[RMDB]
RNA sequence: GGGAACGACUCGAGUAGAGUCGAAAAGGAGCGACAAGUAUUUAGCUUGAGAUAGAUAAAUCACCUCGGUAUGAUUAGGGUGAGACCUAGGAACCGUAGGGGUAUUCUCAAAGGAAGCUUUUGCAGUGAAGGAAGAUACGAUUCGUCGUAUCUUCAAACUGUAGUCGUUCUUCGGAACGACUACAGUAAAAGAAACAACAACAACAAC
Reactivity to DMS in 0.01 (KOAc 150mM, MgCl2 10mM, bicine 150mM(pH8.5), 24C), signal-to-noise 1, nucleotides 027 to 156: g000g010a070g000c020g000a140c020a060a100g020u020a110u000u020u000a020g000c050u000u000g000a110g020a150u000a150g020a150u000a050a050a130u000c050a020c000c000u000c050g000g020u000a150u000g000a120u000u000a040g000g000g000u020g000a230g000a130c040c000u000a050g010g020a110a120c020c000g020u000a010g000g000g050g000u000a030u000u000c040u020c020a040a070a160g000g020a030a200g010c020u000u000u000u000g000c010a060g020u000g020a070a110g000g010a020a020g000a040u020a000c000g010a060u000u010c300g030u000c000g030u000a000u000c000u000u020c020a010a010
Reactivity to 2A3 in 0.01 (KOAc 150mM, MgCl2 10mM, bicine 150mM(pH8.5), 24C), signal-to-noise 2, nucleotides 027 to 156: g040g000a040g010c030g060a040c040a120a010g040u040a280u140u240u120a070g040c040u020u000g030a020g000a020u060a040g120a020u120a140a230a060u070c090a080c080c010u020c000g000g000u160a140u190g100a070u100u040a010g010g040g000u080g120a040g050a020c000c000u010a010g050g000a020a020c000c000g030u100a010g020g000g000g020u030a070u080u020c030u000c000a030a060a000g080g010a050a010g080c000u070u060u170u150g100c040a020g010u030g220a060a080g070g000a000a000g010a030u000a010c000g010a020u000u080c110g050u000c000g000u100a000u000c000u010u000c000a010a000